[RMDB]
RNA sequence: GGGAACGACUCGAGUAGAGUCGAAAAUCCUAAGUCGCUUGAUGACCACAUCUUCAUUUUUCUCGUUAGGUGAAGCCACUACCCACCGCUAUCGGAAACGAUAGCGAGGUGGUGGAGGCCUAACGAGAAAAAUGAAGAUGUGCAAGAGCGAUAUGGACUCAGAAGAAAUGUUCGCAUUUCUUCUGAGAAAAGAAACAACAACAACAAC
Reactivity to 2A3 in 0.01 (KOAc 150mM, MgCl2 10mM, bicine 150mM(pH8.5), 24C), signal-to-noise 3, nucleotides 027 to 156: u020c000c000u020a110a020g040u010c000g010c010u050u040g030a080u080g010a300c030c010a000c000a000u000c000u000u010c000a010u000u000u000u000u010c000u000c000g000u010u000a000g000g030u070g210a200a050g070c000c000a010c000u020a010c000c000c030a160c100c020g000c010u000a000u020c010g010g060a110a060a040c000g000a000u000a000g000c000g000a020g000g000u000g010g000u010g000g000a000g060g000c000c000u000a000a000c000g000a010g000a000a000a000a000a000u000g000a000a000g000a000u000g000u000g000c000a000a010g000a000g010c000g000a010u020a080u110g040g000a040
Reactivity to DMS in 0.01 (KOAc 150mM, MgCl2 10mM, bicine 150mM(pH8.5), 24C), signal-to-noise 1, nucleotides 027 to 156: u000c020c010u020a050a260g000u000c000g000c000u000u000g010a130u000g000a140c300c020a040c000a020u000c000u000u000c020a000u000u000u000u000u000c000u000c010g010u000u010a010g020g040u030g020a160a290g040c040c000a040c000u010a030c000c000c000a270c190c020g000c010u000a000u000c010g030g030a160a080a230c030g020a030u000a000g020c000g030a020g030g020u000g030g030u000g040g010a100g000g000c000c000u020a000a010c000g010a030g000a000a010a000a000a000u000g000a000a030g020a010u010g010u000g000c010a090a150g000a050g000c010g070a020u000a070u000g000g010a300
The data come from the RNA Mapping Database (RMDB), library RNAMAK. The record gives the reactivity of an RNA of 207 nucleotides to 2A3 and DMS. In probing experiments dimethyl sulfate is read out at A N1 and C N3, which are open when not base-paired. For 2A3 the reverse transcriptase was SuperScript II with manganese. For DMS the reverse transcriptase was MarathonRT.